[RMDB]
RNA sequence: GGGAACGACUCGAGUAGAGUCGAAAAGAUAUGGAUCACGUUGCUUGAGUCAUUUAGACAUGUUCCCUUUCGGAAACGAAAGGAGAACAACAGCUAACGGUGACUCAAGCAACGUGAUCCUAAGUCAGAAGACAAAUACCUUCGGGUAUUUGUCUUCAAAAGAAACAACAACAACAAC
Reactivity to DMS in 0.01 (KOAc 150mM, MgCl2 10mM, bicine 150mM(pH8.5), 24C), signal-to-noise 2, nucleotides 027 to 126: g000a030u000a300u000g000g010a030u000c010a030c000g010u000u000g010c010u000u000g030a010g010u000c010a020u010u010u000a030g000a070c200a280u000g000u000u000c000c000c000u000u030u000c000g010g010a210a180a270c000g020a010a000a010g000g000a190g020a010a000c000a030a060c250a130g000c070u000a020a070c300g020g010u010g000a020c000u000c000a030a020g010c000a000a000c010g000u000g010a000u000c000c000u000a000a030g010u000c040a100
This 177-nucleotide RNA was probed chemically with DMS. The DMS profile rests on 1,000 reads.